This 177-nucleotide RNA was probed chemically with DMS and 2A3.
The reactions ran in a buffer of 150 mM KOAc, 10 mM MgCl2 and 150 mM bicine (pH 8.5), at 24 C.
For DMS the reverse transcriptase was MarathonRT.
[RMDB]
RNA sequence: GGGAACGACUCGAGUAGAGUCGAAAACCGGGAUCUGGUCAUCCGGGCGGCCGAGCGCGCCGACGCGCCGCUGCGGCGCGGCAUCCGGUCGCGCAACAGUACCGACGCGGUGUUGAUGAGCCGCGCCGCUUCAUACGCUAUUCGUAGCGUAUGAAGCAAAAGAAACAACAACAACAAC
Reactivity to DMS in 0.01 (KOAc 150mM, MgCl2 10mM, bicine 150mM(pH8.5), 24C), signal-to-noise 3, nucleotides 027 to 126: c010c000g010g010g010a070u010c050u000g010g010u010c060a090u010c030c010g000g010g040c030g030g010c020c020g010a080g000c010g020c040g020c020c020g000a050c110g000c050g010c140c110g000c080u000g010c090g010g000c020g020c000g020g010c060a090u000c090c020g010g010u000c010g020c010g000c050a060a060c150a080g000u010a050c080c000g010a070c020g020c020g010g000u010g010u000u010g000a130u010g010a230g020c010c010g020c010g010c030c020
Reactivity to 2A3 in 0.01 (KOAc 150mM, MgCl2 10mM, bicine 150mM(pH8.5), 24C), signal-to-noise 2, nucleotides 027 to 126: c000c010g000g030g000a050u110c070u140g020g040u060c010a050u020c000c000g030g080g010c030g000g000c000c000g000a020g000c020g000c010g000c020c020g040a050c010g070c080g100c100c160g030c130u150g010c010g010g000c000g000c000g060g090c020a090u040c070c020g000g030u040c010g010c000g000c010a030a030c010a060g030u100a030c000c050g020a040c020g030c020g080g000u050g050u160u270g180a250u140g070a030g010c000c000g000c000g020c040c020